An RNA of 177 nucleotides, treated with DMS and 2A3 and read out base by base.

RNA sequence: GGGAACGACUCGAGUAGAGUCGAAAACUGCGUCCUAGAGAUGUUGAAGACUGAGCCGGUUUACAGUAUCUUACGCAUACACCACUUGUAGACUAGACCGUAUUAGUCUUAAGACAUAAGUCGUGCAGGAACACUGAGAAUUCGUUCUUGGUGUUCCAAAAGAAACAACAACAACAAC
Reactivity to DMS in 0.01 (KOAc 150mM, MgCl2 10mM, bicine 150mM(pH8.5), 24C), signal-to-noise 9, nucleotides 027 to 126: c060u010g010c050g010u010c030c020u010a080g010a100g000a040u010g000u010u010g000a090a060g000a020c000u010g010a040g010c080c000g010g010u000u000u010a050c120a060g000u010a050u010c050u010u020a090c150g020c160a070u010a080c110a100c150c090a060c100u020u020g020u000a030g020a050c100u010a050g000a010c010c030g000u010a060u000u010a010g000u000c000u000u000a070a130g000a030c030a040u010a060a070g010u010c070g010u010g010c100a150
Reactivity to 2A3 in 0.01 (KOAc 150mM, MgCl2 10mM, bicine 150mM(pH8.5), 24C), signal-to-noise 9, nucleotides 027 to 126: c020u040g010c010g030u010c010c020u050a040g010a010g000a060u020g010u030u040g060a040a010g010a000c000u010g000a000g020c020c000g010g010u000u020u040a040c040a030g020u040a070u040c020u070u090a040c060g030c040a040u090a110c090a050c040c060a090c100u090u140g050u070a020g010a040c010u010a010g020a020c010c000g010u030a040u010u030a010g000u000c000u000u020a040a020g010a000c000a010u050a040a020g060u050c020g020u040g030c030a030
The 2A3 profile rests on 85,986 reads.
For DMS the reverse transcriptase was MarathonRT.
High 2A3 reactivity points to a flexible backbone, as in loops and unpaired stretches.